[RMDB]
RNA sequence: GGGAACGACUCGAGUAGAGUCGAAAACGCCAGCCUAGAUUUGUGGAUGUGAACCCAACGCAGGCUCCAGUGAUCCAACUAGUCCACGCUGUCUAUGAUUCCAUGUUGGUAAGAGGCACCUAGAACAUUUCCAGAUGUUUCGCUUGGAUUUUUUGGCCAAGACAUUCCAUUUCGAUGGAAUGUCUUGAAAAGAAACAACAACAACAAC
Reactivity to DMS in 0.01 (KOAc 150mM, MgCl2 10mM, bicine 150mM(pH8.5), 24C), signal-to-noise 2, nucleotides 027 to 156: c080g030c070c030a060g020c020c030u020a070g020a150u000u010u000g050u000g000g010a110u000g000u000g020a090a150c060c010c010a070a090c140g000c080a070g000g000c010u000c040c050a100g020u000g000a180u000c030c020a100a120c040u000a070g020u000c010c010a070c030g010c040u000g010u000c030u010a100u000g010a150u010u000c020c000a130u000g000u010u000g000g010u000a070a140g020a050g010g010c040a020c010c020u000a030g000a040a110c080a090u000u000u010c020c010a080g020a090u000g010u000u000u010c050g020c100u000u000g000g010a080u000u010u000u020u000u010g000g040c170
Reactivity to 2A3 in 0.01 (KOAc 150mM, MgCl2 10mM, bicine 150mM(pH8.5), 24C), signal-to-noise 3, nucleotides 027 to 156: c050g050c030c000a010g030c010c010u080a140g030a300u060u080u110g080u160g040g010a090u070g080u080g150a100a120c020c010c020a030a010c070g000c080a030g040g020c030u050c030c000a020g020u020g090a040u060c010c010a000a040c030u030a020g030u010c020c010a050c040g020c070u020g000u010c010u020a110u130g070a120u220u000c040c040a080u210g050u180u180g120g000u050a090a050g020a040g100g030c020a020c020c030u070a050g050a070a020c020a050u010u090u120c060c020a070g030a130u010g030u000u050u080c020g000c020u000u040g000g060a080u010u030u040u010u080u080g010g010c010